The record gives the reactivity of an RNA of 177 nucleotides to DMS and 2A3. For 2A3 the reverse transcriptase was SuperScript II with manganese. For 2A3, 5,344 sequencing reads were counted. Source: RMDB library OK2TRN, as collected in RNAgym.

RNA sequence: GGGAACGACUCGAGUAGAGUCGAAAACGUCGUGGGCCGGCAAGGCCAGCAGCGCGAACGGCGUGUAGCUGCCGGCGAUGAACACGAAGAUCAUCGAGUGGUCGGCCCGCUUCAUCCAGUUGCGGGCGCUCCAUAGUACGUUCGCGUACUAUGGAGCAAAAGAAACAACAACAACAAC
Reactivity to DMS in 0.01 (KOAc 150mM, MgCl2 10mM, bicine 150mM(pH8.5), 24C), signal-to-noise 4, nucleotides 027 to 126: c250g000u010c070g030u000g010g000g020c010c010g010g000c060a110a100g000g010c100c040a030g040c030a130g010c010g030c010g010a110a140c280g010g000c020g000u010g000u010a070g000c010u000g000c010c010g020g030c020g000a010u000g010a040a110c070a100c150g000a100a120g000a090u000c010a020u010c010g000a100g010u010g030g010u000c030g020g000c000c010c010g020c000u000u000c010a120u010c070c050a130g000u010u000g000c020g000g000g030c130
Reactivity to 2A3 in 0.01 (KOAc 150mM, MgCl2 10mM, bicine 150mM(pH8.5), 24C), signal-to-noise 4, nucleotides 027 to 126: c040g020u010c000g000u030g010g000g000c000c020g020g040c120a180a090g050g000c120c000a010g000c000a000g010c010g010c020g090a300a130c120g250g000c010g000u080g060u060a060g010c020u010g000c010c000g000g020c020g030a040u030g010a050a020c050a010c220g180a090a050g030a090u020c000a000u010c010g020a040g080u180g060g010u060c000g010g020c010c000c010g000c000u030u020c000a060u010c030c010a040g040u080u090g080c050g030g040g010c070